[RMDB]
RNA sequence: GGGAACGACUCGAGUAGAGUCGAAAAGUGGAGGCGAAAGUCACCCUCCUCGCAUCGCAAGUUCGUGCUUGCUACUUACACGUAGGGCGAGGGGUGGGCGAAAGUUGCCAUGAGACCGUAACUUUCGAUGAGGCGGGACUGUUCGCAGUCCCGCCAAGCAAAUAGCUUCCUUCGGGAAGCUAUUUGCAAAAGAAACAACAACAACAAC
Reactivity to 2A3 in 0.01 (KOAc 150mM, MgCl2 10mM, bicine 150mM(pH8.5), 24C), signal-to-noise 1, nucleotides 027 to 156: g050u070g040g050a040g000g080c070g030a070a000a000g100u170c080a130c030c010c000u000c030c000u010c000g070c020a130u120c120g010c030a020a050g030u150u290c170g150u300g000c000u000u050g000c020u000a030c030u070u100a120c070a070c140g070u040a080g020g030g060c040g000a000g000g000g000g060u140g050g000g000c020g000a020a020a000g020u010u020g020c020c000a040u060g020a020g040a040c030c000g010u020a020a020c000u020u020u020c000g040a080u060g060a050g070g040c000g020g000g000a000c000u000g030u040u060c180g010c140a000g000u010c020c010c000g000c000c000a000a000
Record summary: The record gives the reactivity of an RNA of 207 nucleotides to 2A3. It was measured as part of the RMDB library M2RFPK. Values cover nucleotides 27 to 156. For 2A3 the reverse transcriptase was SuperScript II with manganese.